[RMDB]
RNA sequence: GGGAACGACUCGAGUAGAGUCGAAAACAGAAUGUAACCUUUUAAAGAGUGUCUGAGUAUGCAUUUUCAUCACUAGCCUUCAACCCCAAUUGAGUAUUGAAAGGUUUUUCUGGUACUUUCUGGAGCAAGAAGACUAUUUUGAGCAGGAUGGGAAAGGUAACCUUUCACCUUUCGAGGUGAAAGGUUAAAAAGAAACAACAACAACAAC
Reactivity to DMS in 0.01 (KOAc 150mM, MgCl2 10mM, bicine 150mM(pH8.5), 24C), signal-to-noise 2, nucleotides 027 to 156: c050a070g020a060a060u010g020u000a060a120c010c000u000u010u010u000a040a040a140g040a070g040u010g020u000c060u000g030a120g020u000a120u000g020c040a090u010u020u000u000c030a120u000c040a050c080u020a090g020c030c020u000u000c020a050a120c020c000c030c020a080a160u000u000g010a050g020u000a050u000u010g020a050a040a030g020g020u000u000u000u000u000c010u010g020g000u020a050c060u000u000u010c060u000g000g020a020g020c060a070a130g020a040a040g000a030c010u000a120u000u000u000u000g010a040g030c020a060g000g010a100u020g010g000g000a010a020a060g060g030
Reactivity to 2A3 in 0.01 (KOAc 150mM, MgCl2 10mM, bicine 150mM(pH8.5), 24C), signal-to-noise 2, nucleotides 027 to 156: c040a020g140a120a060u150g040u140a070a090c020c000u050u100u090u250a100a180a020g050a010g030u070g030u040c030u030g030a020g040u100a060u150g050c080a050u030u040u000u210c040a040u020c040a030c060u030a040g010c010c010u080u040c030a090a130c040c000c000c020a020a050u060u130g090a080g050u040a030u040u100g080a080a020a040g020g000u000u020u010u030u010c010u000g060g000u040a150c050u040u060u040c000u030g010g000a020g080c020a050a040g010a010a000g000a020c010u010a060u090u120u090u080g010a020g000c000a000g020g010a010u040g020g000g030a000a020a070g010g000
Background:
An RNA of 207 nucleotides, treated with DMS and 2A3 and read out base by base. The reactions ran in a buffer of 150 mM KOAc, 10 mM MgCl2 and 150 mM bicine (pH 8.5), at 24 C. The 2A3 profile rests on 1,324 reads. DMS adducts were read by reverse transcription with MarathonRT. It was measured as part of the RMDB library OK3TST. For 2A3 the reverse transcriptase was SuperScript II with manganese.